The record gives the reactivity of an RNA of 207 nucleotides to 2A3. The reactions ran in a buffer of 150 mM KOAc, 10 mM MgCl2 and 150 mM bicine (pH 8.5), at 24 C.

[RMDB]
RNA sequence: GGGAACGACUCGAGUAGAGUCGAAAAAGAGGCGAUACGUCGCCUCAAGCUUGGUGCUUAGCUUCUUUCACCAAGCAUAUUACACGCGGAUAACCGCCAAAGGAGAAACACUGCCUACGGUCAGUGAGGAAGUUGGUUCGGUUCGCCGAACCAACAACUCAAAGCUCAACUUCGGUUGAGCUUUGAGAAAAGAAACAACAACAACAAC
Reactivity to 2A3 in 0.01 (KOAc 150mM, MgCl2 10mM, bicine 150mM(pH8.5), 24C), signal-to-noise 2, nucleotides 027 to 156: a000g000a040g000g000c020g000a000u040a050c180g110u030c000g000c010c010u000c000a000a000g000c000u000u000g010g000u030g000c020u030u010a000g070c000u050u000c000u040u030u010c000a010c000c000a000a000g000c000a010u020a000u100u210a050c060a020c060g040c000g030g000a070u080a300a270c020c000g020c020c010a060a070a020g060g000a050g000a020a180a000c010a000c000u010g040c000c030u120a060c150g040g040u090c010a000g010u020g050a050g060g070a170a100g010u000u000g000g000u000u000c000g010g000u050u040c190g030c060c000g000a010a000c000c000a000a000c000a000a000
Source information:
2A3 adducts were read by reverse transcription with SuperScript II with manganese.